About this RNA
An RNA of 177 nucleotides, treated with DMS and 2A3 and read out base by base. DMS adducts were read by reverse transcription with MarathonRT. The RNA was probed in 150 mM KOAc, 10 mM MgCl2 and 150 mM bicine (pH 8.5) at 24 C. It was measured as part of the RMDB library OK1LIB. For 2A3, 2,743 sequencing reads were counted.

RNA sequence: GGGAACGACUCGAGUAGAGUCGAAAAUGAAGAUGCUGCUCAACAACGUCCUGGAGCAUCUCGCCGAAAAUCUCAAGCAGCGCGCCGAGCAGCUGGCGGCCAGCUAAGGCAUGUGCGGGCUCAGCCGAUCACCGUUCACUUUCGAGUGAACGGUGAUAAAAGAAACAACAACAACAAC
Reactivity to DMS in 0.01 (KOAc 150mM, MgCl2 10mM, bicine 150mM(pH8.5), 24C), signal-to-noise 2, nucleotides 027 to 126: u010g000a140a010g030a000u010g020c000u000g000c000u020c110a080a060c230a120a020c060g100u030c090c090u000g000g020a160g000c010a140u010c020u000c050g040c020c060g030a090a020a010a080u020c040u000c010a060a170g040c100a050g020c020g000c020g000c040c000g000a050g010c060a040g030c030u000g020g040c060g000g000c030c120a070g010c060u000a100a060g020g030c060a080u040g020u000g060c050g000g010g000c010u030c040a160g010c000c030g000
Reactivity to 2A3 in 0.01 (KOAc 150mM, MgCl2 10mM, bicine 150mM(pH8.5), 24C), signal-to-noise 4, nucleotides 027 to 126: u180g090a110a020g040a040u060g010c030u020g030c030u030c120a110a250c040a120a140c120g100u110c050c050u050g030g040a000g010c000a010u020c040u000c030g010c010c020g080a090a070a080a120u070c050u030c070a100a100g010c030a010g000c040g000c000g020c060c020g030a050g050c030a030g000c040u050g000g010c000g000g020c000c000a030g000c010u070a090a020g040g030c030a040u150g030u080g070c020g010g020g000c030u040c080a010g000c010c000g020